This 177-nucleotide RNA was probed chemically with 2A3 and DMS. 2A3 adducts were read by reverse transcription with SuperScript II with manganese. As a SHAPE reagent, 2A3 marks flexible, mostly unpaired nucleotides at the ribose 2'-OH. DMS adducts were read by reverse transcription with MarathonRT. Values cover nucleotides 27 to 126. It was measured as part of the RMDB library OK2TRN.
RNA sequence: GGGAACGACUCGAGUAGAGUCGAAAAGGCGCCCACCACCGACCCGGUUGCCGAGGUGCUGGCCGGCCUGCCCACAGACGCCGCUAUUCGGCUGCUCGUCGCCCAUGGGGGUGUCGACGCGCUGGACCUAGUCGUAAAUAUUCGUAUUUACGACUAGAAAAGAAACAACAACAACAAC
Reactivity to 2A3 in 0.01 (KOAc 150mM, MgCl2 10mM, bicine 150mM(pH8.5), 24C), signal-to-noise 8, nucleotides 027 to 126: g010g000c010g020c010c010c000a010c010c010a010c020c030g070a070c020c000c030g050g050u160u190g100c030c020g030a040g020g000u050g010c030u040g040g000c010c010g130g030c000c000u040g010c010c040c000a040c020a020g120a030c060g030c040c010g040c090u110a160u140u160c020g030g000c020u050g010c020u010c010g030u020c010g020c000c040c010a220u290g300g030g050g000g000u020g030u030c010g010a040c060g000c010g000c030u040g020g010a030c010
Reactivity to DMS in 0.01 (KOAc 150mM, MgCl2 10mM, bicine 150mM(pH8.5), 24C), signal-to-noise 9, nucleotides 027 to 126: g010g010c020g010c300c010c010a060c120c010a050c050c010g010a180c140c080c050g000g010u010u000g020c040c020g010a110g000g010u000g010c220u000g010g010c050c030g020g020c020c010u000g000c020c010c020a140c120a090g010a100c100g010c030c030g010c160u000a170u000u000c030g010g000c010u010g020c020u000c030g000u000c020g010c010c000c020a230u010g020g010g010g010g010u000g010u000c010g000a040c100g010c060g000c010u000g000g000a130c270